[RMDB]
RNA sequence: GGGAACGACUCGAGUAGAGUCGAAAAUUGAAGGUAAAACAGCCUGUGGGUGAAACACACCCACAGGGCCCAUUGGGCGCUGGCACUCUGGUAUCACGGUACCUUUGUGCGCCUGUUUUACCGAAGGCGCCCGCUACGUUCGCGUAGCGGAAAAGAAACAACAACAACAAC
Reactivity to 2A3 in 0.01 (KOAc 150mM, MgCl2 10mM, bicine 150mM(pH8.5), 24C), signal-to-noise 6, nucleotides 027 to 129: u110u120g050a080a010g010g000u000a000a010a000a010c000a000g000c000c000u000g000u000g010g000g010u020g020a030a090a020c100a000c020a000c040c000c000a000c000a010g000g000g000c010c000c000a020u260u300g000g000g000c010g000c080u110g190g020c010a000c000u000c000u010g000g010u000a000u030c020a030c220g140g000u010a000c000c000u010u000u000g000u000g000c000g000c000c000u000g000u010u000u000u000a000c000c010g000a000a000g020g000c030g050c000
Reactivity to DMS in 0.01 (KOAc 150mM, MgCl2 10mM, bicine 150mM(pH8.5), 24C), signal-to-noise 4, nucleotides 027 to 129: u030u040g000a180a100g000g000u000a000a000a000a000c000a010g030c000c000u030g040u000g010g000g020u020g030a100a190a110c170a210c040a000c010c000c000a000c010a000g000g000g000c030c010c000a000u010u020g000g000g000c000g000c030u050g000g000c010a020c000u000c010u000g020g030u000a020u000c060a130c300g050g000u020a000c010c020u020u010u030g010u000g030c000g000c000c010u000g010u010u010u000u000a000c010c020g020a060a040g000g000c120g040c100